[RMDB]
RNA sequence: GGGAACGACUCGAGUAGAGUCGAAAAGAUAUGGAUAUGCGUACAGCUACCCACCGAUUGAACUACUCGUACGGACUCGGAAACGAGUCCGACACGAGCAAUCGAGGCUGUACGCAUAUCCUAAGUCCUGACACUAGGAGUUCGCUCCUAGUGUCAGAAAAGAAACAACAACAACAAC
Reactivity to DMS in 0.01 (KOAc 150mM, MgCl2 10mM, bicine 150mM(pH8.5), 24C), signal-to-noise 1, nucleotides 027 to 126: g010a060u000a300u000g030g010a010u000a010u000g000c000g010u000a030c000a000g000c010u010a100c010c100c160a300c130c000g010a000u010u000g010a090a090c090u080a300c000u000c000g000u000a170c000g010g030a030c000u020c000g030g000a150a050a220c000g000a050g000u020c000c000g000a030c130a020c000g030a020g000c010a010a000u020c000g010a060g000g000c010u000g000u000a000c000g000c020a000u000a000u030c000c000u000a040a140g000u000c030